RNA sequence: GGGAACGACUCGAGUAGAGUCGAAAAGAAUCUCACUUGGGCGAAAGCUUUAGUGACUCCAGCGCGUAUUAGUGAGAUUAUGAAUACGUUGAAUGGGGAUUUAUGAUGAUUACGCGCAAAGUAAGAAGGGUUAACUAUUGUUCGCAAUAGUUAACCCAAAAGAAACAACAACAACAAC
Reactivity to 2A3 in 0.01 (KOAc 150mM, MgCl2 10mM, bicine 150mM(pH8.5), 24C), signal-to-noise 3, nucleotides 027 to 126: g080a040a070u040c000u010c000a000c000u050u060g000g000g030c030g070a070a000a060g050c070u010u040u060a030g020u030g010a040c000u020c030c000a030g020c000g000c000g000u000a020u030u070a070g060u040g200a060g020a100u040u000a010u070g000a000a000u080a050c170g150u230u230g140a180a130u090g090g000g000g070a030u000u040u010a000u050g070a010u010g000a000u000u040a030c000g000c000g030c070a020a020a030g190u180a130a000g080a130a060
Reactivity to DMS in 0.01 (KOAc 150mM, MgCl2 10mM, bicine 150mM(pH8.5), 24C), signal-to-noise 2, nucleotides 027 to 126: g000a040a010u030c080u000c000a010c020u000u000g030g000g020c010g000a120a040a090g010c010u010u010u010a010g040u000g000a030c080u000c020c040a160g020c030g000c000g000u000a000u020u010a090g010u010g000a140g010a060u020u000a040u030g000a030a020u010a010c150g000u040u020g020a100a070u030g020g000g000g010a040u000u020u030a000u000g000a020u000g030a050u010u000a020c030g000c000g000c030a060a070a100g000u010a100a090g010a050a170